[RMDB]
RNA sequence: GGGAACGACUCGAGUAGAGUCGAAAAGUGGAUGUAGGGUCACUAUCACGGGAUCGCUGCUGGUUGCCGUCCGUCGGCCAGCGGUUAACCUAAAACGGGCUGGUCCUUCGGUGCGCUUUGCACGCCGUGUUGCCGCGGGACGAGACCAAAACGGCGCCUCUUACAGUAUGUUCGCAUACUGUAAGAGAAAAGAAACAACAACAACAAC
Reactivity to 2A3 in 0.01 (KOAc 150mM, MgCl2 10mM, bicine 150mM(pH8.5), 24C), signal-to-noise 7, nucleotides 027 to 156: g060u050g020g050a090u080g040u130a070g030g040g010u050c030a020c080u100a100u170c070a040c110g040g010g020a070u200c110g010c010u010g000c000u000g000g020u010u010g000c010c000g000u030c000c000g010u010c020g000g000c000c000a000g000c000g010g010u060u120a020a050c010c020u050a090a080a010a010c010g010g020g000c000u010g030g000u010c010c000u020u020c010g010g000u040g020c100g010c080u090u080u200g060c060a040c090g020c010c020g000u020g020u030u110g010c010c000g000c020g000g000g000a010c010g010a010g000a020c090c070a070a060a020a020c010g000g010c010g020c020
Reactivity to DMS in 0.01 (KOAc 150mM, MgCl2 10mM, bicine 150mM(pH8.5), 24C), signal-to-noise 1, nucleotides 027 to 156: g040u000g010g020a070u000g030u000a050g010g010g030u000c050a070c070u000a070u000c090a140c070g000g000g000a090u000c120g050c010u000g000c010u020g010g010u000u000g000c010c000g010u000c030c010g010u000c050g020g000c000c010a070g020c030g030g030u000u010a000a080c040c050u010a050a100a080a120c070g010g010g010c020u010g000g010u000c030c020u000u010c000g010g000u010g010c060g010c050u000u000u010g030c050a050c020g010c000c040g000u000g000u010u000g040c020c020g010c040g000g000g000a050c010g000a190g000a060c040c060a020a080a140a080c020g000g020c010g020c170
The record gives the reactivity of an RNA of 207 nucleotides to 2A3 and DMS. In probing experiments dimethyl sulfate is read out at A N1 and C N3, which are open when not base-paired. The reactions ran in a buffer of 150 mM KOAc, 10 mM MgCl2 and 150 mM bicine (pH 8.5), at 24 C. For 2A3 the reverse transcriptase was SuperScript II with manganese. The 2A3 profile rests on 11,611 reads.